[RMDB]
RNA sequence: GGGAACGACUCGAGUAGAGUCGAAAAAUCGCCGAAAGGCACACUUAAUUAUUAAAGGUAAUACACUAUGUCCGGUAAAAUGACUGGUAUCGUAAAAUGGUUCAACGCUGACAAAGGCUUCGGCUUCGUGACUGAUAUCCUUCGGGAUAUCAGUCACAAAAGAAACAACAACAACAAC
Reactivity to 2A3 in 0.01 (KOAc 150mM, MgCl2 10mM, bicine 150mM(pH8.5), 24C), signal-to-noise 1, nucleotides 027 to 126: a000u150c050g000c000c050g040a170a090a000g000g100c000a000c020a020c070u110u000a050a060u130u140a170u020u140a120a160a000g000g020u040a110a000u100a040c080a050c000u040a110u160g040u070c000c000g030g070u030a050a070a050a050u180g010a040c000u070g040g010u060a080u040c000g040u000a000a000a000a180u080g040g000u000u000c100a020a000c080g010c000u000g010a020c060a000a050a000g010g040c000u090u010c010g000g000c000u040u040c010